[RMDB]
RNA sequence: GGGAACGACUCGAGUAGAGUCGAAAAAAAGCCGCAAAGUUAUAGUUGCAAACGACGAUAACUACGCUCUAGCCGCUUAAUGCCGCUAGCCAUCUACCACACGUUUCGCACAUGGGCAGUGGAUUUGAUGGUCAUCUCACAUCGUGCUAGCGAGGGACUCUAAGCUCUGGUUCGCCAGAGCUUAGAGAAAAGAAACAACAACAACAAC
Reactivity to 2A3 in 0.01 (KOAc 150mM, MgCl2 10mM, bicine 150mM(pH8.5), 24C), signal-to-noise 1, nucleotides 027 to 156: a000a000a000g120c050c020g070c020a040a020a070g000u040u010a020u000a120g010u030u030g140c110a030a180a140c100g010a000c010g000a040u030a020a010c000u030a030c070g060c020u030c010u010a020g020c030c020g000c080u090u300a160a000u300g020c000c000g030c000u000a000g050c000c000a020u000c050u070a000c000c030a000c020a020c180g090u040u090u160c020g010c020a000c030a080u050g010g000g060c050a050g000u050g050g050a040u150u010u220g000a010u000g000g010u050c030a110u010c020u020c030a050c010a070u030c100g000u010g010c000u020a050g020c040g050a030g050g000g000a020

Structure probing data (2A3) for a 207-nucleotide construct. For 2A3, 434 sequencing reads were counted. The RNA was probed in 150 mM KOAc, 10 mM MgCl2 and 150 mM bicine (pH 8.5) at 24 C. The data come from the RNA Mapping Database (RMDB), library ARCHII.